[RMDB]
RNA sequence: GGGAACGACUCGAGUAGAGUCGAAAACACAGAGAGUGCUCUUUGCUGUUAUGAUGGGAUCAGAGGGACUGCGUAUGACUUGCUGAGAGCCCCCGAAACAGCCAUGGUGCUUUGGACAGGGCUGGGAGGAGGCACAAGCCUUCGGGCUUGUGCCUCCAAAAGAAACAACAACAACAAC
Reactivity to 2A3 in 0.01 (KOAc 150mM, MgCl2 10mM, bicine 150mM(pH8.5), 24C), signal-to-noise 1, nucleotides 027 to 126: c200a000c050a020g160a010g000a000g090u270g060c010u010c000u010u180u090g000c000u040g000u020u000a060u120g060a090u080g000g060g020a260u170c140a010g020a100g100g130g050a010c000u040g000c100g000u040a080u060g060a080c000u150u210g000c060u030g000a020g000a000g040c000c030c000c000c030g010a120a000a000c040a010g020c000c030a190u220g040g000u060g010c060u020u070u100g050g000a010c060a050g030g010g000c000u010g030g000g050a100